[RMDB]
RNA sequence: GGGAACGACUCGAGUAGAGUCGAAAAACGUCUAUUGCUAUUACCUGUUGUGAUUGAUAAGUAAAGCCACUCAUUGAAAAACCCAAUUCCAAACACCACAGUUUGUGACACAUGAAGUAAUGAAUGAGUAAUCCCCUCUAUUCGUAGAGGGGAUUACAAAAGAAACAACAACAACAAC
Reactivity to DMS in 0.01 (KOAc 150mM, MgCl2 10mM, bicine 150mM(pH8.5), 24C), signal-to-noise 1, nucleotides 027 to 126: a070c140g010u000c020u010a130u020u010g000c040u000a100u000u010a040c030c090u010g010u000u000g030u020g000a050u010u010g010a000u020a070a200g030u000a080a050a100g010c020c050a030c020u000c010a020u020u040g000a020a070a060a100a040c040c050c030a020a170u010u000c030c030a020a050a080c010a030c130c090a080c120a130g000u000u000u000g010u010g010a120c170a030c050a030u010g000a040a110g010u000a050a090u000g000a040a030u040g030a150
Structure probing data (DMS) for a 177-nucleotide construct. For DMS, 697 sequencing reads were counted.